[RMDB]
RNA sequence: GGGAACGACUCGAGUAGAGUCGAAAACGACGUGGUAUCUCUUGAGCUCCACUGGGUGGAACUCAAAGGGAAGUCAAGCCUCCUGAGCGUUUGAGAAGGUCGCGAGAUUGGUCGCUUAGGCCAUGAGAUUCGGCAAGAUCUUCGGAUCUUGCCGAAUAAAAGAAACAACAACAACAAC
Reactivity to DMS in 0.01 (KOAc 150mM, MgCl2 10mM, bicine 150mM(pH8.5), 24C), signal-to-noise 1, nucleotides 027 to 126: c050g030a070c080g010u010g020g010u000a050u000c000u010c000u030u010g010a000g050c020u000c000c000a020c020u020g070g010g030u000g010g000a020a050c000u010c000a000a010a080g010g000g000a010a300g000u000c030a050a070g010c010c010u000c000c040u020g000a080g000c030g020u000u020u000g000a150g030a090a090g000g020u000c040g040c120g020a160g010a080u000u000g040g020u010c050g010c090u000u010a110g010g010c020c050a030u000g000a120g030
Structure probing data (DMS) for a 177-nucleotide construct. The DMS profile rests on 858 reads. Conditions: 150 mM KOAc, 10 mM MgCl2 and 150 mM bicine (pH 8.5), 24 C. For DMS the reverse transcriptase was MarathonRT.